[RMDB]
RNA sequence: GGGAACGACUCGAGUAGAGUCGAAAAGCUCUUGAAAAGAGUGGCGCUCAAAGAAGAAGGGGGCACAUAUUAUGUCCACAUAUAUUUGUGGGCGCACAAAUAUGUCGGGGCACAGUUUUAUUGUGUGGGAUAAUAUAUAUUUCGAUAUAUAUUAUCCAAAAGAAACAACAACAACAAC
Reactivity to 2A3 in 0.01 (KOAc 150mM, MgCl2 10mM, bicine 150mM(pH8.5), 24C), signal-to-noise 4, nucleotides 027 to 126: g000c000u000c000u010u070g110a040a030a000a000g020a000g010u020g020g020c050g010c000u040c020a100a090a020g080a040a020g030a030a060g030g000g000g000g020c030a000c000a010u060a020u060u040a030u060g000u000c010c000a020c000a020u140a000u030a030u050u070u020g000u000g000g000g000c010g030c010a040c020a030a050a000u050a020u030g020u020c050g010g000g020g000c010a010c000a010g010u000u000u030u080a070u090u040g010u000g020u030g040
Reactivity to DMS in 0.01 (KOAc 150mM, MgCl2 10mM, bicine 150mM(pH8.5), 24C), signal-to-noise 4, nucleotides 027 to 126: g020c000u000c000u000u010g020a120a090a070a050g000a010g020u000g000g010c130g000c040u000c060a070a090a130g010a070a070g020a110a090g010g000g020g000g010c140a030c030a030u010a020u010u010a070u030g000u000c000c010a010c010a010u000a080u030a060u030u010u000g010u000g020g010g020c060g000c150a030c160a060a030a020u000a000u010g000u000c140g000g010g000g010c010a020c070a050g000u000u000u010u020a060u020u010g000u000g020u010g010

This 177-nucleotide RNA was probed chemically with 2A3 and DMS. For DMS, 9,876 sequencing reads were counted. Values cover nucleotides 27 to 126. It was measured as part of the RMDB library OK1LIB. For 2A3 the reverse transcriptase was SuperScript II with manganese.